[RMDB]
RNA sequence: GGGAACGACUCGAGUAGAGUCGAAAAUCAAGACAGAAGGCACAUGGGCUCAGAGAAUUUGAGGAAGUUCUGUCAUUCCUACGACCAGCCUGGAUGUGGGGAAGCAGCGGGAGAUGACAAGGCUGUGCCACCGAAAAGGAUUCGUCCUUUUCGGUGGAAAAGAAACAACAACAACAAC
Reactivity to 2A3 in 0.01 (KOAc 150mM, MgCl2 10mM, bicine 150mM(pH8.5), 24C), signal-to-noise 2, nucleotides 027 to 126: u140c000a050a020g030a000c010a000g050a030a040g070g010c050a050c040a170u110g050g040g000c020u020c060a030g070a010g060a170a170u230u160u160g030a030g040g020a070a050g030u070u050c030u020g000u000c000a020u010u000c010c000u010a050c030g010a020c010c030a020g050c010c010u070g090g000a090u090g050u070g030g010g000g030a070a020g080c030a010g000c060g030g020g000a100g010a050u090g000a000c030a090a000g020g000c010u050g050u100g050
Reactivity to DMS in 0.01 (KOAc 150mM, MgCl2 10mM, bicine 150mM(pH8.5), 24C), signal-to-noise 3, nucleotides 027 to 126: u010c140a120a090g010a060c030a060g020a060a090g000g010c090a070c110a080u010g000g010g000c050u000c050a070g010a130g020a050a130u000u000u000g000a050g010g000a110a070g000u000u010c030u000g000u010c030a120u000u010c020c000u010a100c140g010a130c040c030a090g010c070c030u000g010g010a080u000g010u000g010g020g000g000a110a120g030c060a090g020c060g010g000g010a110g000a050u000g010a080c070a070a090g000g000c010u000g000u010g010